[RMDB]
RNA sequence: GGGAACGACUCGAGUAGAGUCGAAAACUGUUUUCUGCGCUUAACCCCGUCUUCCAAUAAUUGGAAAAAUGCAGUGCAUUGCACUUGAUUGCACAACUCCUCGUCAGCGUUAGGGAACGGACUGCAUAUUCUUUCAUUUGUUCGCAAAUGAAAGAAUAAAAGAAACAACAACAACAAC
Reactivity to 2A3 in 0.01 (KOAc 150mM, MgCl2 10mM, bicine 150mM(pH8.5), 24C), signal-to-noise 4, nucleotides 027 to 126: c010u010g000u030u010u030u000c010u040g010c020g000c020u110u120a110a090c040c000c010c000g040u000c070u020u000c010c010a040a120u220a290a220u300u090g000g060a010a020a020a010a010u120g040c030a010g000u010g000c030a080u040u130g020c040a030c130u070u160g070a080u080u060g000c000a000c020a040a090c040u010c020c010u050c030g090u070c050a010g020c000g020u070u210a020g000g000g020a020a000c010g000g040a030c020u080g010c040a020u020
Reactivity to DMS in 0.01 (KOAc 150mM, MgCl2 10mM, bicine 150mM(pH8.5), 24C), signal-to-noise 3, nucleotides 027 to 126: c040u000g010u000u000u000u000c030u010g010c040g000c040u000u010a120a230c040c010c010c030g010u010c130u010u000c010c000a030a150u000a090a190u010u020g010g000a010a050a050a100a050u000g020c080a070g000u000g010c010a080u010u010g010c020a050c160u000u010g020a040u010u000g000c030a020c080a100a090c110u010c040c020u000c090g010u000c090a040g000c020g000u000u010a050g020g010g000a030a020c040g010g010a120c080u000g010c110a100u010
Annotation:
The record gives the reactivity of an RNA of 177 nucleotides to 2A3 and DMS. For 2A3 the reverse transcriptase was SuperScript II with manganese. It was measured as part of the RMDB library RFMREP.